Structure probing data (DMS and 2A3) for a 177-nucleotide construct. For 2A3 the reverse transcriptase was SuperScript II with manganese.
RNA sequence: GGGAACGACUCGAGUAGAGUCGAAAACAAAUUGUCUUGCGUAAUUCUAAUGGUGCUUGCAUUUGGAACGCUGCUGCAUAUAUGAAACUCUCGGAUGCACUUAAACGACAGAUUCGCAUUGCAUGCCGGGUAAAUACUACUUCGGUAGUAUUUACCCAAAAGAAACAACAACAACAAC
Reactivity to DMS in 0.01 (KOAc 150mM, MgCl2 10mM, bicine 150mM(pH8.5), 24C), signal-to-noise 3, nucleotides 027 to 126: c030a080a100a080u000u000g000u000c050u000u010g040c080g000u010a130a060u000u000c080u010a120a090u000g020g000u000g010c060u010u000g030c030a050u010u000u000g020g010a060a090c150g000c060u000g030c060u000g000c020a090u000a070u000a060u010g000a080a050a090c060u000c070u010c050g010g000a070u020g000c070a060c120u000u000a020a050a160c070g000a040c140a030g000a130u000u010c050g020c020a050u010u000g000c010a030u020g010c070c180
Reactivity to 2A3 in 0.01 (KOAc 150mM, MgCl2 10mM, bicine 150mM(pH8.5), 24C), signal-to-noise 3, nucleotides 027 to 126: c010a000a090a020u090u040g030u030c030u020u060g010c010g060u080a060a110u150u020c020u100a070a040u110g060g050u060g090c030u050u070g010c010a070u060u040u070g040g030a040a010c040g010c040u070g020c030u050g020c040a010u060a000u010a020u180g090a100a040a020c040u050c010u010c040g030g030a040u060g000c020a030c060u060u140a080a110a010c030g060a010c010a050g030a060u010u030c020g000c050a030u000u060g000c010a010u070g030c040c040

Description: The DMS profile rests on 2,291 reads. Source: RMDB library 15KREP, as collected in RNAgym.